[RMDB]
RNA sequence: GGGAACGACUCGAGUAGAGUCGAAAAUAAGCAAAAGACAACCACCUUUCCCGCUGACAAUAGCGUUAUCCCUCUGCACUUCGGUAAUAUGAGGGCACAGUAAAUCCCGCAAGGUUGAGAAUGUGAUUAAACAGUUACAGCUUCGGCUGUAACUGAACAUAUAGAAUCACUUCGGUGAUUCUAUAUGAAAAGAAACAACAACAACAAC
Reactivity to 2A3 in 0.01 (KOAc 150mM, MgCl2 10mM, bicine 150mM(pH8.5), 24C), signal-to-noise 4, nucleotides 027 to 156: u110a020a010g050c060a070a030a010a040g110a110c040a070a020c050c040a050c030c000u060u040u050c000c030c020g000c040u050g020a050c100a100a160u080a150g040c020g020u110u060a110u140c000c000c000u020c010u020g000c020a020c040u040u080c150g060g030u060a040a010u070a080u300g000a000g000g000g000c010a010c000a010g020u030a040a050a060u030c040c020c030g020c030a060a070g040g000u020u030g020a030g060a070a130u130g010u040g040a040u070u240a030a100a040c000a000g000u000u000a000c000a000g010c010u050u090c200g090g000c010u000g000u000a000a000c000u000g000a000a000
Reactivity to DMS in 0.01 (KOAc 150mM, MgCl2 10mM, bicine 150mM(pH8.5), 24C), signal-to-noise 3, nucleotides 027 to 156: u000a060a140g010c030a070a060a070a130g000a130c040a080a060c010c020a080c040c040u000u000u000c010c030c000g020c050u010g000a080c090a090a120u010a040g000c070g030u000u000a110u000c000c010c010u000c010u010g010c080a040c030u000u020c180g050g030u000a090a160u010a160u020g000a060g000g030g000c070a050c060a110g030u000a070a090a110u000c000c010c010g030c090a060a100g020g000u000u000g010a080g010a130a110u000g010u010g020a130u000u000a060a070a170c000a010g010u010u000a000c000a000g010c000u000u000c300g070g030c020u000g000u000a000a000c000u000g020a050a090